[RMDB]
RNA sequence: GGGAACGACUCGAGUAGAGUCGAAAAGAUAUGGAAUCUCAGCGAUAAGAUGCCAUCGGAAACGAUGGUCAUCUUUUGACGCUGAUCUUCCUAAGUCAAAACCCUGACAAGUUCGCUUGUCAGGGAAGAUUAUGAAACUGUUCGCAGUUUCAUAAUCAAAAGAAACAACAACAACAAC
Reactivity to DMS in 0.01 (KOAc 150mM, MgCl2 10mM, bicine 150mM(pH8.5), 24C), signal-to-noise 8, nucleotides 027 to 126: g010a020u000a140u000g000g000a020a010u000c290u000c000a010g020c000g020a190u010a050a010g010a010u000g000c010c000a000u000c000g020g000a050a020a060c000g010a010u000g000g000u010c020a000u000c000u000u000u000u000g010a170c040g010c000u000g000a000u000c140u000u000c000c000u000a030a140g000u000c010a100a100a140a150c000c000c000u000g000a010c000a000a010g010u000u010c260g010c000u000u000g000u000c000a010g000g000g000a000a010
Reactivity to 2A3 in 0.01 (KOAc 150mM, MgCl2 10mM, bicine 150mM(pH8.5), 24C), signal-to-noise 5, nucleotides 027 to 126: g000a010u030a010u060g000g010a010a000u000c000u000c020a000g000c010g080a110u060a300a040g000a000u010g000c000c000a010u000c000g000g020a030a020a010c010g000a000u000g000g000u030c000a000u000c000u020u010u030u100g050a010c010g000c000u000g000a010u000c000u010u000c000c000u020a050a010g000u000c020a010a040a090a300c000c010c000u000g000a000c000a010a020g020u070u150c180g140c200u000u010g000u000c000a000g000g000g000a000a000
Chemical mapping of a 177-nucleotide RNA with DMS and 2A3. The data come from the RNA Mapping Database (RMDB), library TTRDEL. The reactions ran in a buffer of 150 mM KOAc, 10 mM MgCl2 and 150 mM bicine (pH 8.5), at 24 C. For 2A3, 29,558 sequencing reads were counted.